[RMDB]
This 177-nucleotide RNA was probed chemically with 2A3 and DMS. For 2A3, 1,516 sequencing reads were counted. The reactions ran in a buffer of 150 mM KOAc, 10 mM MgCl2 and 150 mM bicine (pH 8.5), at 24 C. For 2A3 the reverse transcriptase was SuperScript II with manganese.
RNA sequence: GGGAACGACUCGAGUAGAGUCGAAAAGUAUCGAGCGCGCGUGGCAGGAAAUUGAACAGGCCGACCGCGUGCUGUUUAUGGUCGAUGGCACCACAACAGACGCCGUGGAUCCGGCAGAGAUCUGGCAGUCAGUACCACUAUUCGUAGUGGUACUGACAAAAGAAACAACAACAACAAC
Reactivity to 2A3 in 0.01 (KOAc 150mM, MgCl2 10mM, bicine 150mM(pH8.5), 24C), signal-to-noise 2, nucleotides 027 to 126: g070u060a080u150c020g030a000g010c020g000c010g000c020g030u050g010g000c020a050g040g140a080a170a110u250u230g020a210a060c060a090g090g000c000c000g030a090c070c000g000c000g000u010g020c010u000g000u000u090u030a090u110g050g020u010c070g060a150u110g100g000c090a010c060c000a050c000a020a050c000a040g140a090c050g010c010c000g000u090g060g020a060u000c020c000g080g000c020a030g010a020g020a180u080c020u060g030g010c020a030
Reactivity to DMS in 0.01 (KOAc 150mM, MgCl2 10mM, bicine 150mM(pH8.5), 24C), signal-to-noise 3, nucleotides 027 to 126: g000u000a060u000c050g000a080g000c020g000c020g010c050g000u000g020g000c110a130g000g010a080a050a130u010u010g030a090a180c210a130g000g000c020c030g000a100c130c020g020c030g020u010g000c000u010g000u000u010u010a040u010g020g030u000c020g020a110u000g000g040c120a080c000c020a050c110a020a040c050a070g000a090c150g020c030c050g020u000g010g000a080u000c090c030g010g000c080a100g000a130g000a050u020c010u010g010g040c130a130